[RMDB]
RNA sequence: GGGAACGACUCGAGUAGAGUCGAAAAGAGGCCAGCACGUCAUGGUAGGUUACUAGCGGACUCAUACUCCGUUGGGUUGUAGCUCAUUUGGGUAGAGCACUCGUUUUUGGAACGAAUGGUAGCCGGUGUCGUUAGUCAUAUUCGUAUGACUAACGACAAAAGAAACAACAACAACAAC
Reactivity to DMS in 0.01 (KOAc 150mM, MgCl2 10mM, bicine 150mM(pH8.5), 24C), signal-to-noise 3, nucleotides 027 to 126: g020a110g000g000c040c030a080g000c050a070c090g010u020c040a020u020g010g040u020a040g000g000u000u010a050c050u000a050g020c030g010g000a080c040u020c260a080u010a170c300u010c020c060g020u000u000g000g000g030u010u000g000u010a060g000c020u000c010a060u020u000u000g000g000g030u000a050g010a050g000c040a120c070u020c020g000u000u000u000u000u020g010g010a040a030c040g000a050a080u000g010g000u010a040g000c000c030g000g020u010
Reactivity to 2A3 in 0.01 (KOAc 150mM, MgCl2 10mM, bicine 150mM(pH8.5), 24C), signal-to-noise 5, nucleotides 027 to 126: g110a010g000g050c010c010a020g000c060a010c050g060u080c050a050u070g050g030u070a050g000g050u090u090a040c010u020a020g030c040g010g050a060c000u010c020a080u050a100c010u020c000c000g000u010u020g020g010g010u050u130g090u080a030g010c000u000c020a090u050u060u120g050g000g000u040a040g000a010g060c030a030c020u030c030g050u010u020u010u090u120g110g080a020a010c010g000a020a020u060g030g000u030a020g010c030c000g050g020u030
Source information: The data come from the RNA Mapping Database (RMDB), libraries RFM100 and RFMREP. Chemical mapping of a 177-nucleotide RNA with DMS and 2A3. 2A3 adducts were read by reverse transcription with SuperScript II with manganese. For DMS the reverse transcriptase was MarathonRT. Values cover nucleotides 27 to 126.